[RMDB]
RNA sequence: GGGAACGACUCGAGUAGAGUCGAAAAUUUUGGUGAAGUGAGAUUGUGUUUUUUAAAUGUCAUAAAAGACGUUUAUUAGAAACUGGGUUGUUGUCCCGGAGGGGAAUCUAGUUUGAAGGCACAAACGGAUACAUUAUGUCUUCGGACAUAAUGUAUCAAAAGAAACAACAACAACAAC
Reactivity to DMS in 0.01 (KOAc 150mM, MgCl2 10mM, bicine 150mM(pH8.5), 24C), signal-to-noise 4, nucleotides 027 to 126: u010u010u010u010g020g010u000g010a040a140g010u000g010a100g010a120u010u000g010u000g010u000u000u000u000u000u000a000a020a020u000g010u000c000a070u000a080a120a170a150g000a020c010g030u000u000u000a010u010u000a080g010a030a020a030c020u000g010g010g010u000u000g010u010u010g000u000c000c020c020g020g030a100g010g000g000g010a070a040u000c030u000a040g010u000u000u000g000a080a040g020g010c050a030c040a030a040a080c180g000
Reactivity to 2A3 in 0.01 (KOAc 150mM, MgCl2 10mM, bicine 150mM(pH8.5), 24C), signal-to-noise 2, nucleotides 027 to 126: u060u050u010u090g050g000u050g020a090a030g050u060g050a050g020a080u080u020g010u000g020u100u060u000u000u020u000a010a010a000u000g000u010c010a030u130a280a120a000a030g000a000c000g000u030u000u000a050u030u040a050g080a010a060a000c030u020g010g030g010u040u010g050u020u060g040u010c010c000c020g030g040a040g000g010g020g010a000a030u000c000u010a000g020u010u000u030g020a040a010g040g000c040a010c000a030a050a010c040g010